The record gives the reactivity of an RNA of 170 nucleotides to 2A3 and DMS. Reactivities are given for positions 27 through 129. 2A3 adducts were read by reverse transcription with SuperScript II with manganese.
[RMDB]
RNA sequence: GGGAACGACUCGAGUAGAGUCGAAAAUCAUCCUCGAGUUUCUUGAUGGUUCUCCUGCUCUUCCGGAGCCUUCUUUCGAGGUCUUCCGCGUCUUUUCUUGCUUGGAUCCAUUUCUCGAGGACGUCCUAACCAGGGAGGUUCGCCUCCCUGAAAAGAAACAACAACAACAAC
Reactivity to 2A3 in 0.01 (KOAc 150mM, MgCl2 10mM, bicine 150mM(pH8.5), 24C), signal-to-noise 9, nucleotides 027 to 129: u100c000a000u000c000c000u000c010g010a010g010u080u140u070c130u190u240g030a010u010g010g010u120u080c060u040c040c000u020g030c020u020c030u190u010c030c010g000g000a000g000c020c010u080u080c030u100u300u180c160g010a010g010g030u020c050u110u020c010c000g030c100g080u040c090u040u190u110u040c090u100u090g020c020u040u080g010g010a030u050c000c000a020u050u050u010c000u000c000g000a000g000g000a010c010g030u010c000c000u000a050a050c050
Reactivity to DMS in 0.01 (KOAc 150mM, MgCl2 10mM, bicine 150mM(pH8.5), 24C), signal-to-noise 7, nucleotides 027 to 129: u000c030a020u000c000c010u000c030g000a000g000u020u000u020c150u080u080g020a070u020g030g020u070u000c060u000c010c000u030g020c020u030c130u040u000c060c030g000g020a000g030c060c020u030u020c080u040u090u080c180g000a020g020g030u020c010u020u030c000c000g040c220g000u040c100u000u010u040u040c140u060u040g030c000u010u020g010g010a040u000c020c030a050u030u040u050c020u020c010g000a020g000g030a020c090g030u030c020c000u020a090a060c230
The data come from the RNA Mapping Database (RMDB), library 15KLIB. The DMS profile rests on 37,679 reads. For DMS the reverse transcriptase was MarathonRT.